An RNA of 177 nucleotides, treated with DMS and 2A3 and read out base by base. Values cover nucleotides 27 to 126.
[RMDB]
RNA sequence: GGGAACGACUCGAGUAGAGUCGAAAAGAUAUGGAGACAGGUGCCAGCUGAGGUUCGGAAACGAACCCAGCGGUAAUUCCUGCUCCUAAGUCAAAGCAACUAGGGGUGUUCGCACCCCUAGUUGCAACGGAGGAUUAUAGUUCGCUAUAAUCCUCCGAAAAGAAACAACAACAACAAC
Reactivity to DMS in 0.01 (KOAc 150mM, MgCl2 10mM, bicine 150mM(pH8.5), 24C), signal-to-noise 3, nucleotides 027 to 126: g000a030u000a300u010g010g000a010g010a140c010a000g010g020u000g000c020c010a150g050c000u000g010a100g010g000u000u010c000g010g010a040a110a180c020g000a010a010c000c000c010a000g010c000g010g020u000a050a110u010u000c000c000u000g000c000u000c000c010u000a030a060g010u000c020a110a110a130g000c000a000a010c000u000a010g000g000g030g020u000g010u000u020c230g010c000a010c000c000c000c010u000a000g010u010u000g010c010a020a020
Reactivity to 2A3 in 0.01 (KOAc 150mM, MgCl2 10mM, bicine 150mM(pH8.5), 24C), signal-to-noise 3, nucleotides 027 to 126: g020a010u090a010u150g000g020a010g070a120c010a010g030g020u020g020c080c120a160g000c190u050g080a140g120g000u020u000c000g000g020a070a060a050c010g000a000a010c000c000c000a000g000c010g000g000u030a010a020u140u080c010c000u000g000c010u000c000c000u000a120a010g040u040c040a070a040a090g000c000a000a010c000u000a010g000g010g000g010u020g040u140u160c220g090c050a010c000c000c010c010u000a010g000u000u000g000c010a000a000